[RMDB]
RNA sequence: GGGAACGACUCGAGUAGAGUCGAAAAAGGAGGGAGCUAGGAGCGUGGGGGGGCCGGUGGAGCCAUGGGAUGCUCCUCCCGAUUCCGUCCAUCCCCCCCCCCAGGAGGUCCCCCCAGGAAUGGCGGGUAAGACCCAGAUUCGUCUGGGUCAAAAGAAACAACAACAACAAC
Reactivity to 2A3 in 0.01 (KOAc 150mM, MgCl2 10mM, bicine 150mM(pH8.5), 24C), signal-to-noise 5, nucleotides 027 to 129: a010g040g010a030g020g010g010a020g020c030u070a020g010g050a030g020c030g030u130g010g000g000g000g000g000g000c020c010g070g030u070g060g050a030g020c030c040a130u130g050g040g010a030u100g010c010u010c000c010u010c000c000c000g030a020u120u040c020c020g110u040c030c000a100u070c020c000c000c000c000c000c000c000c000c000a050g030g100a040g000g020u020c000c000c000c000c000c000a010g040g000a070a050u050g020g020c040g000g000g010u050a070a010
Reactivity to DMS in 0.01 (KOAc 150mM, MgCl2 10mM, bicine 150mM(pH8.5), 24C), signal-to-noise 4, nucleotides 027 to 129: a020g000g050a110g000g030g060a000g030c150u040a070g000g000a050g000c030g030u030g000g020g020g020g030g000g030c020c040g000g020u020g040g000a060g040c080c070a170u070g000g000g000a170u040g040c050u040c050c000u020c020c020c030g000a200u000u000c000c000g010u010c020c070a070u010c040c010c000c020c030c020c000c020c010c000a110g030g010a100g010g030u050c000c000c000c000c000c000a000g000g000a100a010u000g010g010c120g010g000g050u050a140a120
Overview
Source: RMDB library 15KLIB, as collected in RNAgym. The record gives the reactivity of an RNA of 170 nucleotides to 2A3 and DMS. The 2A3 profile rests on 12,964 reads. The RNA was probed in 150 mM KOAc, 10 mM MgCl2 and 150 mM bicine (pH 8.5) at 24 C. Reactivities are given for positions 27 through 129.